Conditions: 150 mM KOAc, 10 mM MgCl2 and 150 mM bicine (pH 8.5), 24 C. Structure probing data (2A3 and DMS) for a 177-nucleotide construct. Values cover nucleotides 27 to 126. 2A3 adducts were read by reverse transcription with SuperScript II with manganese.

RNA sequence: GGGAACGACUCGAGUAGAGUCGAAAAAUCGGAUCGGCGCGAUCUGCGCAUAGCGCGUGCGCCAGGCGCUCGACGUCGGAUCAGGAUCCGAUACGUGCGAUCGCGCGUACCUGCGAGCGGCGCACGCAGAGGGACGAAAAUUCGUUUUCGUCCCUCUAAAAGAAACAACAACAACAAC
Reactivity to 2A3 in 0.01 (KOAc 150mM, MgCl2 10mM, bicine 150mM(pH8.5), 24C), signal-to-noise 4, nucleotides 027 to 126: a020u020c000g010g010a020u030c050g090g000c040g020c060g120a220u080c120u180g030c050g010c050a070u150a060g240c130g010c010g020u010g000c010g000c000c010a010g030g100c070g020c030u100c100g190a220c010g130u070c040g040g020a080u060c080a090g140g070a010u000c000c000g000a010u000a010c000g000u030g030c010g110a300u220c230g000c000g000c010g020u050a100c010c040u060g050c010g010a040g030c030g010g020c000g000c000a000c000g000c000
Reactivity to DMS in 0.01 (KOAc 150mM, MgCl2 10mM, bicine 150mM(pH8.5), 24C), signal-to-noise 4, nucleotides 027 to 126: a070u000c020g010g000a040u000c020g010g000c040g020c020g000a090u010c110u010g020c010g020c050a110u000a100g010c140g000c000g030u010g010c030g010c010c050a140g010g010c060g020c030u010c100g020a140c060g020u000c050g020g000a090u020c110a160g000g000a130u000c010c010g010a020u000a000c040g020u000g000c010g000a140u000c180g010c010g000c000g000u000a050c110c040u000g000c040g000a110g020c050g000g020c000g010c000a000c010g040c060
For DMS, 4,798 sequencing reads were counted. The 2A3 profile rests on 3,669 reads.